An RNA of 177 nucleotides, treated with 2A3 and DMS and read out base by base. Source: RMDB library TTRINS, as collected in RNAgym. For DMS, 896 sequencing reads were counted. The 2A3 profile rests on 2,640 reads. Conditions: 150 mM KOAc, 10 mM MgCl2 and 150 mM bicine (pH 8.5), 24 C. For 2A3 the reverse transcriptase was SuperScript II with manganese. For DMS the reverse transcriptase was MarathonRT.

[RMDB]
RNA sequence: GGGAACGACUCGAGUAGAGUCGAAAAGAUAUGGACAUACUUGAGCAGUUUUCAGUGAACUACCUCCUCUUGAUCGGAAACGAUCAGGGAGGCACUGAAAACUGCAAUGAUGGUAUGUCCUAAGUCAGUCAUAGCGAUAGUUCGCUAUCGCUAUGACAAAAGAAACAACAACAACAAC
Reactivity to 2A3 in 0.01 (KOAc 150mM, MgCl2 10mM, bicine 150mM(pH8.5), 24C), signal-to-noise 1, nucleotides 027 to 126: g080a010u060a120u220g000g020a000c000a000u010a000c000u050u020g010a010g040c010a050g010u000u000u050u030c000a010g000u020g050a080a050c100u170a140c300c010u020c000c010u230c100u210u170g000a010u010c000g010g030a090a050a060c010g010a000u010c010a000g010g010g000a000g000g010c000a010c010u000g020a030a000a020a000c010u000g000c010a000a010u020g010a030u050g000g010u010a000u000g000u040c000c000u010a040a020g030u010c040a030
Reactivity to DMS in 0.01 (KOAc 150mM, MgCl2 10mM, bicine 150mM(pH8.5), 24C), signal-to-noise 1, nucleotides 027 to 126: g000a050u000a300u040g000g030a010c000a000u000a040c000u000u000g000a150g050c000a020g030u000u000u000u000c000a010g000u010g000a150a010c140u010a300c010c000u000c000c000u010c140u030u090g000a000u020c000g000g000a220a190a270c000g010a010u000c040a010g000g000g010a040g000g000c000a010c020u000g000a000a000a000a000c000u000g000c020a030a010u000g030a120u010g000g000u010a000u000g000u000c050c000u000a000a040g010u000c030a140